[RMDB]
RNA sequence: GGGAACGACUCGAGUAGAGUCGAAAACGGCCCCGUCGUACAGAAUGGUAACAUAUCUCUCCAAAUAUCUGAGCUUGGGUAUACGGGGAAACCCAACCCCUUGGGAAGAUUGGGUAUAUGGCUAAAUUACAUCGAUUGUACUUCGGUACAAUCGAAACCGUUUUGAUUACUUCGGUAAUCAAAACGGAAAAGAAACAACAACAACAAC
Reactivity to 2A3 in 0.01 (KOAc 150mM, MgCl2 10mM, bicine 150mM(pH8.5), 24C), signal-to-noise 1, nucleotides 027 to 156: c060g060g000c010c000c000c020g080u040c020g040u100a040c000a060g120a110a160u110g160g010u110a200a050c010a030u060a050u030c070u020c010u000c100c040a050a160a130u240a130u050c020u010g020a020g100c020u020u010g010g040g000u010a010u030a060c020g000g000g010g020a020a010a000c010c000c000a010a000c000c010c020c000u010u030g010g000g060a030a000g000a030u020u050g000g020g030u030a040u000a010u060g070g010c060u120a120a000a080u210u150a030c020a050u020c000g000a000u000u000g000u000a010c000u000u020c190g040g000u000a000c010a000a000u000c000g010a000a000a000
Record summary: Chemical mapping of a 207-nucleotide RNA with 2A3. It was measured as part of the RMDB library M2RFPK.